Description
This 177-nucleotide RNA was probed chemically with 2A3 and DMS. For 2A3, 1,508 sequencing reads were counted. As a SHAPE reagent, 2A3 marks flexible, mostly unpaired nucleotides at the ribose 2'-OH. For DMS, 1,180 sequencing reads were counted. The RNA was probed in 150 mM KOAc, 10 mM MgCl2 and 150 mM bicine (pH 8.5) at 24 C.
RNA sequence: GGGAACGACUCGAGUAGAGUCGAAAAUCGGGCGAGACAAAUUCAAAGGUGCCGCCUUGGACUACCGCAUCGCGACCCGAACAGCCCGCUAGCAGGGUCGCCAACAGUGCACCGGCGUUCGCCAGCAGGCAUAUAGCAGUUUCGACUGCUAUAUGCCAAAAGAAACAACAACAACAAC
Reactivity to 2A3 in 0.01 (KOAc 150mM, MgCl2 10mM, bicine 150mM(pH8.5), 24C), signal-to-noise 1, nucleotides 027 to 126: u110c010g040g000g000c050g050a060g040a040c130a070a160a090u220u110c070a070a070a170g050g000u020g040c030c000g000c020c020u010u090g030g030a010c030u120a090c070c050g020c030a040u100c040g000c010g010a020c000c000c010g000a020a000c000a030g020c000c030c100g060c110u060a010g040c010a010g030g000g040u000c000g020c010c020a040a020c000a030g120u100g090c020a030c040c010g030g010c030g000u050u080c060g040c010c030a020g040c080a040
Reactivity to DMS in 0.01 (KOAc 150mM, MgCl2 10mM, bicine 150mM(pH8.5), 24C), signal-to-noise 2, nucleotides 027 to 126: u000c110g020g030g010c010g010a080g020a160c090a060a070a120u000u000c160a050a290a190g000g020u000g020c200c040g000c050c080u000u010g020g010a060c070u000a050c060c030g010c080a070u000c200g020c000g030a020c040c020c000g010a090a140c140a080g010c060c070c120g010c060u000a130g000c190a130g000g000g000u000c070g010c000c100a060a050c150a070g060u000g000c040a040c090c010g010g000c180g020u000u000c020g020c000c000a200g020c110a050